[RMDB]
RNA sequence: GGGAACGACUCGAGUAGAGUCGAAAACGGUUGUACUGUCAAGUGCAUGGCCGAGUAGCUAAGUGCGGACGGGAUAAGCGCUGAAAGCAUCUAAGCGCCAAGCCCUUCCCAAGAUGAGUUUUCCCUAUCUGCAUAGAUGAUUCGUCAUCUAUGCAGAAAAAGAAACAACAACAACAAC
Reactivity to DMS in 0.01 (KOAc 150mM, MgCl2 10mM, bicine 150mM(pH8.5), 24C), signal-to-noise 9, nucleotides 027 to 126: c040g000g020u010u000g020u000a020c020u000g010u040c260a080a040g020u000g010c010a040u050g010g010c000c010g010a130g010u010a100g000c020u000a060a070g020u020g010c120g010g010a050c080g010g000g000a020u010a170a220g000c000g020c000u000g010a110a140a150g020c180a060u010c060u010a200a050g010c000g020c000c030a060a130g000c000c000c010u000u000c010c000c010a100a070g000a070u010g000a050g000u010u010u000u000c000c000c000u010a160
Reactivity to 2A3 in 0.01 (KOAc 150mM, MgCl2 10mM, bicine 150mM(pH8.5), 24C), signal-to-noise 7, nucleotides 027 to 126: c010g000g000u040u010g020u030a010c010u050g220u300c120a140a040g000u000g010c000a040u070g120g000c000c010g010a020g050u050a010g000c010u050a060a100g100u050g130c120g030g010a010c030g000g000g000a020u030a080a020g000c020g000c010u020g040a100a060a030g090c010a030u060c050u080a060a000g000c000g000c000c000a070a090g020c000c000c000u000u000c000c000c000a030a010g110a110u200g030a010g030u020u010u010u010c020c000c000u010a100